[RMDB]
RNA sequence: GGGAACGACUCGAGUAGAGUCGAAAAGCGUACUACUGGUGGUGCAUUGCGUUGAAAUCAAGCUACCCACCGCUCCCAAAUAGGAGCGAGGCUUGAUGGAGCAAUGCGCCACCAGUAUCGCAAAACUCUGUUAUCGAGUUCGCUCGAUAACAGAGAAGUGACACAUACAGUUCGCUGUAUGUGUCACAAAAGAAACAACAACAACAAC
Reactivity to DMS in 0.01 (KOAc 150mM, MgCl2 10mM, bicine 150mM(pH8.5), 24C), signal-to-noise 1, nucleotides 027 to 156: g020c090g040u000a080c060u010a050c010u000g010g020u000g000g020u000g000c020a030u000u000g020c000g040u000u000g010a300a090a070u000c010a010a000g000c050u000a060c020c010c040a300c100c000g000c000u010c000c000c000a050a200a170u010a060g020g000a060g030c000g000a090g030g000c000u000u010g000a000u010g000g020a300g020c000a020a030u010g030c010g010c000c000a000c000c000a000g000u000a000u000c000g000c020a100a040a080a130c000u000c010u000g000u000u000a010u000c000g010a050g010u010u010c300g040c000u000c000g000a040u010a040a000c010a000g000a000g010a060a030
Reactivity to 2A3 in 0.01 (KOAc 150mM, MgCl2 10mM, bicine 150mM(pH8.5), 24C), signal-to-noise 3, nucleotides 027 to 156: g010c030g050u090a060c030u000a000c000u020g000g000u000g000g020u010g020c000a010u000u000g000c000g270u240u040g020a010a010a000u000c010a000a000g010c000u060a160c010c010c020a040c030c000g000c010u030c010c000c020a150a300a080u270a050g000g000a000g000c000g000a010g000g000c000u000u010g000a000u000g000g000a030g000c010a000a000u010g000c000g000c000c000a000c000c000a000g000u000a000u000c000g000c000a000a000a000a010c000u000c000u000g000u020u000a010u010c010g010a000g010u060u060c230g060c050u000c000g010a000u000a010a000c000a000g000a000g000a020a020
Structure probing data (DMS and 2A3) for a 207-nucleotide construct. It was measured as part of the RMDB library RNAMAK. For 2A3 the reverse transcriptase was SuperScript II with manganese. The reactions ran in a buffer of 150 mM KOAc, 10 mM MgCl2 and 150 mM bicine (pH 8.5), at 24 C. Reactivities are given for positions 27 through 156.